About this RNA: Chemical mapping of a 177-nucleotide RNA with DMS and 2A3. For DMS, 490 sequencing reads were counted. Reactivities are rounded to 0.1 and cut off at 0 and 3. For DMS the reverse transcriptase was MarathonRT.

[RMDB]
RNA sequence: GGGAACGACUCGAGUAGAGUCGAAAAGAAGCCAUCUAUUAUCAAAGCAAAAGUUUUUACAUCCUUAUAUGUGCGGAGGCAUCAAUCGCCCAAAUUUUGACAAGACGCACAACGGAACAUGGUUUGGCUGCUUGUGACUAUUCGUAGUCACAAGCAGAAAAGAAACAACAACAACAAC
Reactivity to DMS in 0.01 (KOAc 150mM, MgCl2 10mM, bicine 150mM(pH8.5), 24C), signal-to-noise 1, nucleotides 027 to 126: g020a140a110g050c050c010a130u000c040u000a040u050u000a050u010c090a070a140a110g050c100a120a040a090a070g000u000u000u030u000u000a050c090a130u020c050c000u050u000a070u000a090u000g010u010g070c000g000g000a070g010g020c060a080u000c120a070a080u000c130g040c000c000c040a030a090a120u000u030u030u000g000a020c180a110a150g000a100c030g010c000a000c010a030a040c270g010g000a030a080c120a050u000g010g000u010u010u000g020g030
Reactivity to 2A3 in 0.01 (KOAc 150mM, MgCl2 10mM, bicine 150mM(pH8.5), 24C), signal-to-noise 1, nucleotides 027 to 126: g100a090a010g000c010c030a130u050c030u050a150u230u000a060u170c050a120a070a050g000c060a100a190a180a030g010u030u030u030u090u020a120c060a150u000c000c000u020u090a090u000a020u270g000u010g010c010g000g090a080g010g080c000a000u090c060a020a210u110c060g090c000c010c000a040a090a080u130u150u020u080g080a040c050a150a030g020a090c010g060c030a010c010a050a010c070g030g020a020a050c060a060u050g030g290u170u010u030g080g000